[RMDB]
Conditions: 150 mM KOAc, 10 mM MgCl2 and 150 mM bicine (pH 8.5), 24 C. Structure probing data (DMS) for a 177-nucleotide construct.
RNA sequence: GGGAACGACUCGAGUAGAGUCGAAAAGAUAUGGACUAUUCAGGACAUGCACGGUUGUCAUCGGAAACGAUGACACCCGUGCAACAGCCUGAUAGUCCUAAGUCAAACACGUCCUUCGGGACGUGAAUCAUGUUGGGGUGUUCGCACCCCAACAUGAAAAAGAAACAACAACAACAAC
Reactivity to DMS in 0.01 (KOAc 150mM, MgCl2 10mM, bicine 150mM(pH8.5), 24C), signal-to-noise 1, nucleotides 027 to 126: g020a020u010a300u000g000g030a000c000u000a020u060u010c020a010g000g000a070c170a220u000g010c000a000c000g000g040u030u010g000u000c000a030u010c020g080g020a040a120a250c000g000a000u040g000a010c000a010c030c000c000g000u000g010c000a000a000c240a240g030c050c000u000g000a030u000a000g000u000c000c000u000a030a050g000u000c030a130a120a250c050a000c030g000u000c000c010u000u000c280g020g030g000a040c000g010u020g000a040a150